[RMDB]
RNA sequence: GGGAACGACUCGAGUAGAGUCGAAAACAACAUCUUCCACUCUACAACAAUGCCAGGGAAGGCGGAGGCUGGUACAGUGCAUCAAGACACAGCUACUCCUGGGUGACAGAGGUUCAGGGCCAGCUCAUACCAUGAGGUGAUUCGUCACCUCAUGGUAAAAAGAAACAACAACAACAAC
Reactivity to DMS in 0.01 (KOAc 150mM, MgCl2 10mM, bicine 150mM(pH8.5), 24C), signal-to-noise 3, nucleotides 027 to 126: c060a090a140c090a230u010c050u000u000c020c030a090c050u010c010u000a060c100a090a090c150a120a120u020g000c020c040a040g000g000g000a080a040g000g010c110g020g020a070g010g020c010u000g000g000u000a060c130a080g020u000g040c060a100u020c110a070a060g010a080c070a040c050a060g010c050u000a060c060u000c020c040u000g010g000g010u000g000a070c080a060g000a060g010g010u000u010c070a090g010g000g000c020c030a040g000c050u000c110a180
Reactivity to 2A3 in 0.01 (KOAc 150mM, MgCl2 10mM, bicine 150mM(pH8.5), 24C), signal-to-noise 2, nucleotides 027 to 126: c030a010a030c000a080u030c020u040u000c010c000a040c030u000c010u030a050c020a140a010c010a160a070u120g020c000c030a010g010g110g000a070a080g030g030c030g020g040a050g080g000c020u040g010g010u110a070c030a090g040u020g100c000a110u080c070a080a030g040a050c030a020c000a090g010c020u020a040c010u050c000c010u030g020g040g040u070g050a020c060a100g040a030g090g000u060u040c040a050g020g010g010c020c010a010g010c020u050c040a030
Chemical mapping of a 177-nucleotide RNA with DMS and 2A3.
The RNA was probed in 150 mM KOAc, 10 mM MgCl2 and 150 mM bicine (pH 8.5) at 24 C.
It was measured as part of the RMDB library OK2TRN.
The 2A3 profile rests on 2,372 reads.
Values are in units of 0.01, from 0 to 300, in steps of 10.
For 2A3 the reverse transcriptase was SuperScript II with manganese.